[RMDB]
RNA sequence: GGGAACGACUCGAGUAGAGUCGAAAAUGUCAGCGUCCACAUCAGGAUGGACUACAACUGUACAAGCAAUAACGGCGUCAAAAAAAUAUCUGUGGAAUUAUGAAGUUGUUACCUAUACAAAUGGUAGCACGUAUCAAUCAGCACCAUGUAUCAUCGGUAAAUGAUUAGUGUUCGCACUAAUCAUUUAAAAAGAAACAACAACAACAAC
Reactivity to 2A3 in 0.01 (KOAc 150mM, MgCl2 10mM, bicine 150mM(pH8.5), 24C), signal-to-noise 9, nucleotides 027 to 156: u110g020u040c030a020g020c030g050u000c010c000a020c020a110u160c070a050g110g040a160u030g010g000a010c010u050a040c050a160a040c020u040g010u160a040c030a090a050g040c030a070a150u090a190a050c060g050g030c020g060u090c070a070a070a040a010a010a050a090u130a050u050c070u070g040u070g050g060a080a070u110u060a080u270g060a090a030g020u060u020g000u000u020a020c000c000u070a060u030a170c060a050a150a020u070g000g000u030a040g000c010a030c060g020u070a090u180c060a100a030u050c020a010g030c010a010c010c020a020u040g050u030a070u060c070a030u060c040g020g000
Reactivity to DMS in 0.01 (KOAc 150mM, MgCl2 10mM, bicine 150mM(pH8.5), 24C), signal-to-noise 5, nucleotides 027 to 156: u000g030u000c020a080g020c050g010u000c000c010a100c070a140u010c120a150g030g020a120u000g000g010a080c030u000a110c040a060a060c030u000g020u000a070c050a070a120g030c070a080a080u010a070a080c050g010g020c050g020u000c050a010a000a040a130a090a060a140u000a070u000c040u010g020u000g020g010a080a120u010u010a050u000g000a080a160g020u000u000g010u000u000a030c010c000u000a140u000a130c180a090a080a110u000g010g010u000a020g020c010a030c050g030u000a090u010c070a060a090u000c040a090g030c030a080c030c030a040u000g020u000a060u000c060a060u000c050g020g020
Chemical mapping of a 207-nucleotide RNA with 2A3 and DMS. For 2A3 the reverse transcriptase was SuperScript II with manganese. The RNA was probed in 150 mM KOAc, 10 mM MgCl2 and 150 mM bicine (pH 8.5) at 24 C. DMS adducts were read by reverse transcription with MarathonRT. For DMS, 12,583 sequencing reads were counted.